Structure probing data (2A3 and DMS) for a 177-nucleotide construct. High 2A3 reactivity points to a flexible backbone, as in loops and unpaired stretches. The RNA was probed in 150 mM KOAc, 10 mM MgCl2 and 150 mM bicine (pH 8.5) at 24 C.

[RMDB]
RNA sequence: GGGAACGACUCGAGUAGAGUCGAAAAGUGUGGAUGGAGUGAGAGGAGGAGUCCUGUGUAUGUCGUUGUCAACGUCGACCGAGCGUCCGUGCCAAGCGCUGCGUCACCAGGGGAUGACUGUCGGAAGUAAUACCCAUUGUUUCGACAAUGGGUAUUAAAAAGAAACAACAACAACAAC
Reactivity to 2A3 in 0.01 (KOAc 150mM, MgCl2 10mM, bicine 150mM(pH8.5), 24C), signal-to-noise 7, nucleotides 027 to 126: g090u090g020u050g030g030a080u040g030g010a070g040u080g030a060g020a030g050g010a020g010g010a020g020u030c010c020u060g010u030g010u070a100u110g050u010c030g030u040u060g070u050c030a080a010c060g050u040c020g030a070c040c010g030a020g020c030g030u020c020c010g010u030g030c020c020a070a030g040c030g010c030u060g010c010g030u040c010a020c020c020a030g000g000g020g010a030u050g010a050c020u040g030u080c010g020g020a080a010g030
Reactivity to DMS in 0.01 (KOAc 150mM, MgCl2 10mM, bicine 150mM(pH8.5), 24C), signal-to-noise 9, nucleotides 027 to 126: g010u000g010u000g010g010a070u010g000g000a090g020u010g010a080g010a090g000g010a070g000g000a090g000u010c020c030u000g020u020g020u010a060u020g020u000c030g010u000u010g000u010c090a070a090c100g000u010c050g000a070c040c060g010a090g010c060g010u010c040c050g010u010g000c050c050a070a110g010c060g000c040u000g000c070g010u000c030a070c060c050a080g010g000g000g010a090u010g010a070c050u000g000u000c060g000g010a070a080g000

DMS adducts were read by reverse transcription with MarathonRT.